[RMDB]
RNA sequence: GGGAACGACUCGAGUAGAGUCGAAAAUUUUGACAUACGCGAUAAUUGUUCAUUGGAGAAGUUCAUGUCUACUCCCAAUGCCAUCUUUAUUUCUGAUAGAAAAAUCAAGAAAUACCCUUGUAUGGUACGAUCCCGCACUUCGGUGCGGGAAAAAGAAACAACAACAACAAC
Reactivity to 2A3 in 0.01 (KOAc 150mM, MgCl2 10mM, bicine 150mM(pH8.5), 24C), signal-to-noise 2, nucleotides 027 to 129: u090u000u070u170g000a000c000a050u050a000c040g000c000g040a050u120a010a160u000u020g080u170u000c060a020u090u090g000g030a120g000a220a050g000u070u100c010a030u150g050u000c000u040a070c100u040c000c000c000a000a000u110g010c010c010a000u000c110u010u030u000a000u000u080u000c000u050g030a000u000a040g300a050a030a000a000a000u030c110a110a030g000a070a010a010u040a120c000c000c030u080u000g100u100a110u080g000g000u040a000c050g000a000
Record summary
The record gives the reactivity of an RNA of 170 nucleotides to 2A3. It was measured as part of the RMDB library 15KLIB. The RNA was probed in 150 mM KOAc, 10 mM MgCl2 and 150 mM bicine (pH 8.5) at 24 C.